[RMDB]
The record gives the reactivity of an RNA of 177 nucleotides to DMS and 2A3. Reactivities are rounded to 0.1 and cut off at 0 and 3. For DMS, 9,266 sequencing reads were counted. The RNA was probed in 150 mM KOAc, 10 mM MgCl2 and 150 mM bicine (pH 8.5) at 24 C.
RNA sequence: GGGAACGACUCGAGUAGAGUCGAAAAGGGUGCUGAUCGCGUUCAUCGUCCCAGCGCUGAGACAGAAGCAGCAUCAGGACCACGACCAGGAUGUCCCCAAGGUCGCAUGAGAUCUGCUCCUCAUGGCAAAUCGAUUACUCUUCGGAGUAAUCGAUUUAAAAGAAACAACAACAACAAC
Reactivity to DMS in 0.01 (KOAc 150mM, MgCl2 10mM, bicine 150mM(pH8.5), 24C), signal-to-noise 5, nucleotides 027 to 126: g000g000g010u000g030c000u000g000a070u010c070g010c090g030u020u020c040a060u020c090g020u030c010c030c040a130g000c080g020c140u020g030a110g010a060c080a100g000a110a090g000c050a070g000c060a040u000c020a050g010g020a070c030c020a130c040g000a070c010c010a110g000g000a090u010g010u010c000c000c000c180a190a120g000g010u020c030g000c100a040u010g010a060g000a090u020c040u010g000c060u010c050c000u000c010a030u000g020g010c140
Reactivity to 2A3 in 0.01 (KOAc 150mM, MgCl2 10mM, bicine 150mM(pH8.5), 24C), signal-to-noise 8, nucleotides 027 to 126: g080g000g000u090g040c010u010g010a070u070c060g020c030g030u030u040c030a110u070c080g030u020c020c000c000a030g040c070g010c150u080g030a010g020a090c040a040g060a100a020g090c070a010g010c000a010u010c010a010g030g080a010c020c020a050c040g010a010c000c010a010g080g020a100u140g050u110c010c000c000c010a080a070g020g000u020c010g000c050a030u050g000a000g000a060u030c040u100g010c020u030c000c010u020c010a030u030g040g030c030